An RNA of 177 nucleotides, treated with 2A3 and DMS and read out base by base. For DMS, 24,181 sequencing reads were counted. It was measured as part of the RMDB library VIROID. For 2A3 the reverse transcriptase was SuperScript II with manganese.
RNA sequence: GGGAACGACUCGAGUAGAGUCGAAAACAUGCCGACCCGAAGAGGAAAGGAGGACACGGACGACAAACCGUGAGUUCUACUGCCCUUUAUUGUUGGGUGCACCCUGGGACCCAGUAAUGCCCGGGGGGUCAUAUACAUAGUUCGCUAUGUAUAUGACAAAAGAAACAACAACAACAAC
Reactivity to 2A3 in 0.01 (KOAc 150mM, MgCl2 10mM, bicine 150mM(pH8.5), 24C), signal-to-noise 6, nucleotides 027 to 126: c040a060u130g100c020c030g080a040c000c000c020g030a050a020g050a040g040g010a070a090a020g020g010a010g000g010a000c000a000c010g020g080a060c050g040a040c180a040a080a020c010c000g010u020g090a070g050u030u020c010u040a100c020u030g020c010c010c000u040u080u050a250u110u200g140u040u090g000g000g010u020g020c020a110c020c000c000u000g010g010g010a030c010c020c030a060g110u170a060a070u140g080c000c000c000g000g000g000g000g000
Reactivity to DMS in 0.01 (KOAc 150mM, MgCl2 10mM, bicine 150mM(pH8.5), 24C), signal-to-noise 9, nucleotides 027 to 126: c080a080u010g010c050c050g010a100c010c070c060g020a090a070g000a040g010g010a060a270a030g010g010a050g000g000a040c020a030c010g010g010a070c080g010a120c300a070a100a090c020c010g000u000g000a100g010u000u000c010u000a090c030u000g000c300c010c010u000u000u000a090u030u000g010u000u000g000g000g000u000g010c070a080c010c010c000u000g000g000g010a060c020c020c020a110g010u010a030a020u000g010c000c000c000g010g010g010g010g000